[RMDB]
RNA sequence: GGGAACGACUCGAGUAGAGUCGAAAAUACGACAUUAUUCCUCCUUCAAUGACAAUGCCUUUAUGCGCUGACGUCGUCUCCAUGUAUUACCAUCACGAGUUUGAGGAAUUACGCCAGUGCGUUGCUCCGUGCUAGUCGUAUUCGUACGACUAGCACGAAAAGAAACAACAACAACAAC
Reactivity to 2A3 in 0.01 (KOAc 150mM, MgCl2 10mM, bicine 150mM(pH8.5), 24C), signal-to-noise 5, nucleotides 027 to 126: u200a050c070g010a020c020a080u060u090a040u130u040c000c000u050c000c010u100u060c090a120a160u140g030a050c010a090a090u180g050c000c000u170u180u110a130u150g010c040g010c020u010g010a050c050g010u020c000g020u010c040u040c050c020a060u040g060u070a090u100u140a080c060c060a070u200c050a040c110g090a070g070u060u160u040g120a050g030g000a050a030u060u030a030c040g000c010c000a000g000u010g030c000g070u040u050g020c020u030c020
Reactivity to DMS in 0.01 (KOAc 150mM, MgCl2 10mM, bicine 150mM(pH8.5), 24C), signal-to-noise 2, nucleotides 027 to 126: u060a080c130g020a020c090a060u020u050a120u060u000c010c010u000c000c090u000u000c050a070a080u010g020a030c050a080a000u000g000c000c010u000u030u020a110u050g000c060g060c000u030g000a120c100g010u000c060g000u000c020u020c070c160a040u000g020u000a080u040u020a160c120c070a120u020c180a030c210g010a090g010u010u000u040g000a030g010g010a040a000u020u000a030c070g010c000c040a040g010u000g040c040g050u000u040g000c060u010c030
The record gives the reactivity of an RNA of 177 nucleotides to 2A3 and DMS. For DMS the reverse transcriptase was MarathonRT. High DMS reactivity at an A or C suggests that its Watson-Crick edge is free. For 2A3, 2,369 sequencing reads were counted. The reactions ran in a buffer of 150 mM KOAc, 10 mM MgCl2 and 150 mM bicine (pH 8.5), at 24 C.